This 177-nucleotide RNA was probed chemically with 2A3 and DMS. The reactions ran in a buffer of 150 mM KOAc, 10 mM MgCl2 and 150 mM bicine (pH 8.5), at 24 C. 2A3 is a SHAPE reagent: it acylates the 2'-hydroxyl of flexible nucleotides of all four kinds. DMS adducts were read by reverse transcription with MarathonRT.
RNA sequence: GGGAACGACUCGAGUAGAGUCGAAAAAUAGAUGCAAAGUUUUUCCUGUUGUGUCACUCCCCAGUGGCGUCACGACAGUAGAAAUGGAAGGUGUUACACAAAUUCUCGACGUCAUGAAGGAUGCGGCUAGUCGCACUGAUUUCGAUCAGUGCGACUAAAAAGAAACAACAACAACAAC
Reactivity to 2A3 in 0.01 (KOAc 150mM, MgCl2 10mM, bicine 150mM(pH8.5), 24C), signal-to-noise 2, nucleotides 027 to 126: a040u120a060g170a040u090g080c160a090a010a170g010u000u000u000u130u000c000c000u030g080u000u000g000u000g030u030c030a000c140u000c050c020c000c000a000g020u020g010g010c030g030u020c060a030c080g080a010c090a000g080u190a080g170a060a170a100u170g000g100a100a060g020g120u120g240u180u280a140c090a010c060a030a180a040u130u000c020u030c040g010a010c000g000u010c000a000u030g000a050a010g000g000a000u030g010c040g000g000c000
Reactivity to DMS in 0.01 (KOAc 150mM, MgCl2 10mM, bicine 150mM(pH8.5), 24C), signal-to-noise 1, nucleotides 027 to 126: a110u000a020g000a000u010g030c300a120a160a140g010u000u000u000u000u000c100c000u000g000u000u000g020u000g100u010c000a080c060u050c000c000c050c100a110g050u000g000g000c040g000u010c000a190c260g030a030c110a020g000u000a060g000a030a060a020u030g000g030a100a060g010g020u000g010u040u000a130c170a100c090a110a020a200u000u030c000u040c120g000a000c080g030u000c000a120u000g000a170a090g030g000a000u060g000c020g000g000c020